[RMDB]
RNA sequence: GGGAACGACUCGAGUAGAGUCGAAAAGAAAGAAAGGCAUGCUUCUUUCAAGCUCUGUUAGCAUGAACUAGGCUUCAAGAUUCCAAAAGCCUAGUUCAUGUCAAGAGAGUGUGAAGAAAGCAAGAAAGAGAUCUGGUCAGUUCGCUGACCAGAUCUCAAAAGAAACAACAACAACAAC
Reactivity to 2A3 in 0.01 (KOAc 150mM, MgCl2 10mM, bicine 150mM(pH8.5), 24C), signal-to-noise 2, nucleotides 027 to 126: g070a050a120a000g220a080a080a000g130g030c070a040u100g000c000u000u000c000u000u180u100c110a010a050g000c000u030c000u010g180u300u060a040g000c000a000u000g000a000a000c000u020a000g000g020c040u060u050c240a160a160g030a300u300u170c130c060a050a120a000a000g000c030c030u000a000g000u000u000c000a000u000g000u000c000a000a000g000a000g000a000g000u040g070u140g030a000a010g000a050a020a020g000c050a030a030g000a020a060a000